Background:
The data come from the RNA Mapping Database (RMDB), library OK2TST. An RNA of 177 nucleotides, treated with 2A3 and DMS and read out base by base. The reactions ran in a buffer of 150 mM KOAc, 10 mM MgCl2 and 150 mM bicine (pH 8.5), at 24 C. 2A3 adducts were read by reverse transcription with SuperScript II with manganese.
RNA sequence: GGGAACGACUCGAGUAGAGUCGAAAAGGCGCUGACGCCUGCCAGUAAAUGUUCGCGCAGGGAAGUAUCGCCAGCCAGGGAUCGGUGAGCUUCCAGAAUCGCGCUGGUAGCACCGUCGCUAUCCAGACGUCAUGAGUACUUUCGAGUACUCAUGACGAAAAGAAACAACAACAACAAC
Reactivity to 2A3 in 0.01 (KOAc 150mM, MgCl2 10mM, bicine 150mM(pH8.5), 24C), signal-to-noise 3, nucleotides 027 to 126: g070g000c030g010c160u080g030a040c020g040c050c000u000g030c010c000a000g020u170a010a220a120u300g070u200u140c050g030c000g000c070a010g060g010g040a040a000g030u080a300u300c000g000c000c020a040g040c020c030a090g140g020g020a100u150c090g000g010u020g010a020g060c000u010u000c000c010a030g150a030a100u140c040g000c020g000c040u000g000g000u010a000g020c040a020c090c020g050u010c000g000c020u010a060u060c000c000a030g070a120
Reactivity to DMS in 0.01 (KOAc 150mM, MgCl2 10mM, bicine 150mM(pH8.5), 24C), signal-to-noise 2, nucleotides 027 to 126: g020g010c070g040c110u020g010a040c020g050c100c020u000g000c010c010a040g020u010a030a150a100u010g020u010u000c050g010c040g000c240a140g020g010g000a020a020g000u000a120u000c020g000c000c010a050g020c020c120a080g000g000g000a080u000c150g000g030u000g010a040g000c000u000u000c000c000a100g000a070a070u000c050g000c110g030c010u000g000g000u010a000g020c050a120c160c060g000u000c000g000c020u000a070u000c010c010a070g010a300